[RMDB]
Structure probing data (2A3 and DMS) for a 177-nucleotide construct. For 2A3 the reverse transcriptase was SuperScript II with manganese. For DMS, 10,004 sequencing reads were counted. Reactivities are rounded to 0.1 and cut off at 0 and 3. It was measured as part of the RMDB library OK2TRN.
RNA sequence: GGGAACGACUCGAGUAGAGUCGAAAACUGUCGUCUGUCUGAAUCAUAAGAAUGAUUCUUCUAUAUAUGAGGACGCGACCAUGUUCAACAGAUGUGGAUUCAUAAAGUACAAUUUAGAGGAAGGAUAAUCUCCUUUUAGUUUCGACUAAAAGGAGAUAAAAGAAACAACAACAACAAC
Reactivity to 2A3 in 0.01 (KOAc 150mM, MgCl2 10mM, bicine 150mM(pH8.5), 24C), signal-to-noise 4, nucleotides 027 to 126: c020u040g090u110c020g000u010c060u100g080u020c040u030g040a030a030u080c020a030u050a140a080g120a210a080u110g050a070u090u000c000u020u000c060u050a160u020a080u010a040u300g030a020g040g000a010c000g000c000g000a000c010c010a050u070g030u060u060c040a090a060c000a110g030a080u040g060u060g100g030a050u100u060c030a030u180a160a130a020g070u080a090c040a050a100u030u090u130a110g020a020g060g040a050a020g040g010a040u080a140
Reactivity to DMS in 0.01 (KOAc 150mM, MgCl2 10mM, bicine 150mM(pH8.5), 24C), signal-to-noise 8, nucleotides 027 to 126: c080u000g020u000c020g010u000c040u010g010u000c090u000g000a100a040u000c040a040u000a110a110g010a130a100u000g000a110u000u000c050u000u000c040u000a120u010a150u000a060u020g010a220g000g010a030c040g010c080g020a080c130c130a040u000g010u000u000c040a090a050c150a070g010a030u000g010u000g000g000a110u000u000c060a040u010a050a050a080g000u010a080c130a050a070u000u000u000a060g000a110g000g000a050a050g000g000a100u010a080